Structure probing data (DMS and 2A3) for a 207-nucleotide construct. The RNA was probed in 150 mM KOAc, 10 mM MgCl2 and 150 mM bicine (pH 8.5) at 24 C. The 2A3 profile rests on 3,827 reads. DMS adducts were read by reverse transcription with MarathonRT.

RNA sequence: GGGAACGACUCGAGUAGAGUCGAAAACGAGUACUUCGGUACUCGAAAAACCGUAGGUGAGGAUUCGAGGCUCCUCCCCACCAUUGCUUCGAAAGAGGCAAUGAGGGAGAACUACCUCGAACUCACCUAAACGGAAAAAGAUCUGUUCGCAGAUCAACUCGAAAUAUCUGUUCGCAGAUAUUUCGAGAAAAGAAACAACAACAACAAC
Reactivity to DMS in 0.01 (KOAc 150mM, MgCl2 10mM, bicine 150mM(pH8.5), 24C), signal-to-noise 1, nucleotides 027 to 156: c000g030a030g040u000a000c000u000u010c280g030g070u010a000c000u000c000g020a000a000a130a060a100c010c000g010u010a040g010g020u000g000a020g010g000a240u000u000c000g000a020g010g000c050u000c100c010u020c000c010c010c030a180c070c000a060u000u010g000c040u000u000c000g000a270a130a250g000a020g000g040c020a000a000u000g010a110g010g010g000a070g020a010a030c040u000a030c000c000u000c000g020a000a020c000u000c010a030c000c000u000a000a000a030c000g060g000a030a080a060a140a120g020a010u000c000u000g020u000u010c140g000c060a030g010a060u000c040a020a130
Reactivity to 2A3 in 0.01 (KOAc 150mM, MgCl2 10mM, bicine 150mM(pH8.5), 24C), signal-to-noise 3, nucleotides 027 to 156: c000g000a000g010u000a010c010u050u130c240g050g000u010a000c000u040c010g010a040a010a000a010a010c010c010g010u010a010g000g000u000g000a010g050g000a130u000u030c010g010a000g000g000c000u030c000c010u000c000c000c000c010a200c040c000a010u000u000g010c010u000u010c010g070a110a070a030g000a000g000g000c000a000a000u020g000a050g000g010g010a000g000a020a010c080u130a050c040c000u010c000g000a000a000c000u000c000a000c000c000u000a010a000a000c000g040g070a070a050a060a030a010g060a000u080c000u000g050u100u120c300g000c100a000g000a000u000c010a000a070